Structure probing data (2A3 and DMS) for a 177-nucleotide construct. The RNA was probed in 150 mM KOAc, 10 mM MgCl2 and 150 mM bicine (pH 8.5) at 24 C.
RNA sequence: GGGAACGACUCGAGUAGAGUCGAAAAAUCGAAUACUUCGGUAUUCGAUCAAGGGCUGUUUUUCUCGCUGACUUUCAGCCCCAAACAAAAUAUGUCAGCAAAUUCCAUACUCAUUCGUGAGUAUGAACAUAACCCAUUAAUUCGUUAAUGGGUUAUGAAAAGAAACAACAACAACAAC
Reactivity to 2A3 in 0.01 (KOAc 150mM, MgCl2 10mM, bicine 150mM(pH8.5), 24C), signal-to-noise 8, nucleotides 027 to 126: a000u000c000g000a000a000u000a000c000u020u030c110g090g000u000a000u000u000c000g000a000u020c020a070a130g010g000g000c000u000g020u020u020u000u070u050c140u070c120g010c010u010g000a010c000u010u040u020c010a000g000c000c000c020c090a010a040a010c010a010a010a020a030u200a060u090g010u010c000a000g010c010a020a030a030u110u020c040c000a000u000a010c000u000c000a020u050u050c160g070u030g020a000g000u000a000u000g010a010a000
Reactivity to DMS in 0.01 (KOAc 150mM, MgCl2 10mM, bicine 150mM(pH8.5), 24C), signal-to-noise 8, nucleotides 027 to 126: a020u000c000g000a010a000u000a000c000u000u010c170g020g010u000a010u000u000c000g010a010u000c120a120a120g000g010g020c000u000g000u000u000u000u010u010c130u010c200g010c000u010g000a020c000u000u000u000c010a000g000c010c000c000c160a020a010a190c050a020a020a020a020u010a020u010g010u000c000a000g020c010a100a080a120u010u010c090c010a010u000a000c000u000c000a030u000u010c180g020u000g000a020g010u000a000u000g010a060a110